[RMDB]
RNA sequence: GGGAACGACUCGAGUAGAGUCGAAAAACUUUUAGCGUUUGCAAGACGCUGUUCUUGCAAUGAUCUGGAUUUAGCGCACCGAGGUCCGAAAUCCAGAUCAACAUUUCGGACCUCCGCGCUAAUAAAACGUGUGAUUCGAAUUCGUUCGAAUCACACGAAAAGAAACAACAACAACAAC
Reactivity to DMS in 0.01 (KOAc 150mM, MgCl2 10mM, bicine 150mM(pH8.5), 24C), signal-to-noise 1, nucleotides 027 to 126: a060c090u020u000u010u000a080g000c050g000u020u000u000g000c010a020a020g020a030c010g050c220u030g020u010u000c000u000u000g000c000a020a000u010g000a150u000c070u000g030g020a170u010u000u000a000g000c050g010c040a110c100c140g010a010g010g030u000c000c010g000a010a000a000u020c120c170a190g010a110u000c100a030a040c230a090u010u000u010c000g010g000a030c010c010u010c010c120g020c000g000c000u000a010a000u000a040a050a070a110
Reactivity to 2A3 in 0.01 (KOAc 150mM, MgCl2 10mM, bicine 150mM(pH8.5), 24C), signal-to-noise 1, nucleotides 027 to 126: a000c010u010u070u110u160a080g010c030g040u010u020u090g000c000a020a000g000a010c040g170c300u130g070u140u000c020u000u010g000c000a010a030u120g020a090u050c060u100g150g000a100u050u000u030a010g000c000g000c010a020c040c160g010a020g000g020u000c000c000g000a030a000a000u060c080c020a050g040a170u060c010a010a030c020a010u000u000u030c010g000g000a000c060c010u000c000c000g000c000g000c000u020a000a000u010a000a020a000a010
Structure probing data (DMS and 2A3) for a 177-nucleotide construct. For 2A3 the reverse transcriptase was SuperScript II with manganese. Source: RMDB library M2PK90, as collected in RNAgym. The RNA was probed in 150 mM KOAc, 10 mM MgCl2 and 150 mM bicine (pH 8.5) at 24 C. For 2A3, 1,141 sequencing reads were counted.